Description:
This 177-nucleotide RNA was probed chemically with 2A3. Conditions: 150 mM KOAc, 10 mM MgCl2 and 150 mM bicine (pH 8.5), 24 C. Reactivities are given for positions 27 through 126.
RNA sequence: GGGAACGACUCGAGUAGAGUCGAAAAGAAGAGAAUAACGGUGUAAGUGCAGCCCGUCUUACACCGUAAGGCACAGCGGAAACGCUGAUGUUAAAUACAGGGCUGAGAGACGGAAGUAGACCGUCAAAGUCGAGUAGUGGUUCGCCACUACUCGACUAAAAGAAACAACAACAACAAC
Reactivity to 2A3 in 0.01 (KOAc 150mM, MgCl2 10mM, bicine 150mM(pH8.5), 24C), signal-to-noise 1, nucleotides 027 to 126: g280a020a010g180a000g060a120a000u200a040a000c000g000g010u000g000u000a000a000g000u010g160c010a000g010c010c010c000g020u000c000u000u000a000c000a000c000c000g000u020a010a150g010g000c000a000c000a020g000c000g000g000a080a100a050c020g000c000u010g000a100u000g000u010u100a050a000a000u240a000c040a040g020g040g000c000u000g010a010g000a000g010a000c040g000g000a130a010g120u130a100g060a070c000c000g000u000c000a000a070